[RMDB]
RNA sequence: GGGAACGACUCGAGUAGAGUCGAAAAGUGUUGUCAAUAUUGUUCGAACUCAUUUGUAUCGGGUGAAAAUAGUUUGCAAUGAUCAGUAGUACACAACACCAAACGACCGGCGUUUAUUUAUUAUACUUACUACACGACAAUAUUGCCUUUACACCAACUUUACGUUAACAUUCGUGUUAACGUAAAGAAAAGAAACAACAACAACAAC
Reactivity to DMS in 0.01 (KOAc 150mM, MgCl2 10mM, bicine 150mM(pH8.5), 24C), signal-to-noise 2, nucleotides 027 to 156: g010u020g030u000u030g020u010c010a080a100u000a030u000u000g020u000u010c040g010a190a150c080u010c050a110u010u010u000g040u000a100u000c070g020g000g010u000g000a090a090a080a090u010a090g010u000u000u010g020c030a100a130u000g010a110u000c100a110g010u010a050g020u000a090c140a090c060a050a090c020a040c000c010a050a140a150c180g010a160c280c140g030g010c070g000u000u000u010a040u000u000u010a050u040u000a090u020a040c050u000u000a100c020u000a020c040a140c020g030a070c020a020a040u000a020u000u000g010c060c030u000u000u000a090c050a100c030c000a020a190
Reactivity to 2A3 in 0.01 (KOAc 150mM, MgCl2 10mM, bicine 150mM(pH8.5), 24C), signal-to-noise 4, nucleotides 027 to 156: g020u010g000u020u010g030u030c010a010a000u000a000u010u040g060u110u080c010g050a050a040c020u010c070a080u030u030u160g050u060a100u120c060g040g020g020u100g110a040a080a070a030u090a040g080u040u080u080g000c040a050a030u040g020a050u110c050a020g040u050a010g040u070a030c090a000c010a120a100c020a030c060c040a070a120a070c050g110a070c090c080g130g020c050g080u060u060u090a110u080u150u040a110u100u080a060u040a070c030u070u000a000c000u020a010c020a000c040g010a000c010a000a000u000a000u020u010g010c000c000u020u080u110a060c070a020c030c010a010a030